[RMDB]
RNA sequence: GGGAACGACUCGAGUAGAGUCGAAAACCCACUAUGAAUCUAGUCACUAAAUAAACACAAUUAGCUACUGUGUGUAAUAGUGAGUGUUGAUAACACAAAAUAAUAGUAUAGUUUUGGAAGAUUAUACGCGCCCUUGCUCCGUUCGCGGAGCAAGGAAGCAUAGGAUCGACUUCGGUCGAUCCUAUGCAAAAGAAACAACAACAACAAC
Reactivity to DMS in 0.01 (KOAc 150mM, MgCl2 10mM, bicine 150mM(pH8.5), 24C), signal-to-noise 1, nucleotides 027 to 156: c020c000c000a170c190u030a140u060g000a200a130u010c030u000a210g030u000c000a020c020u020a000a000a060u000a160a300a040c000a000c020a020a020u010u010a150g040c140u000a090c060u000g020u010g020u000g010u000a080a290u010a020g000u020g020a080g020u000g030u000u000g050a090u000a060a130c070a050c050a020a030a060a090u000a100a300u000a080g010u000a030u020a030g000u000u000u000u010g020g020a300a200g000a020u000u000a120u000a050c010g000c080g000c190c000c000u000u000g000c000u000c000c000g020u000u010c300g010c000g010g000a040g000c030a010a000g010g020a030a020
Reactivity to 2A3 in 0.01 (KOAc 150mM, MgCl2 10mM, bicine 150mM(pH8.5), 24C), signal-to-noise 3, nucleotides 027 to 156: c000c040c000a010c030u140a130u300g150a150a060u020c080u100a060g110u020c020a000c000u000a020a000a060u040a020a060a000c000a000c010a000a100u120u060a070g050c060u130a040c030u020g000u000g010u010g010u030a010a050u010a020g000u010g020a040g040u010g020u020u030g070a090u220a270a010c050a010c040a020a150a030a050u270a090a100u060a100g000u010a010u000a020g010u020u000u100u210g130g020a090a050g000a060u020u000a000u020a030c030g040c010g070c040c010c010u000u000g000c000u000c000c000g010u060u040c110g030c020g060g000a000g020c000a000a000g000g010a000a000

This 207-nucleotide RNA was probed chemically with DMS and 2A3.
In probing experiments dimethyl sulfate is read out at A N1 and C N3, which are open when not base-paired.
The reactions ran in a buffer of 150 mM KOAc, 10 mM MgCl2 and 150 mM bicine (pH 8.5), at 24 C.
For 2A3, 1,803 sequencing reads were counted.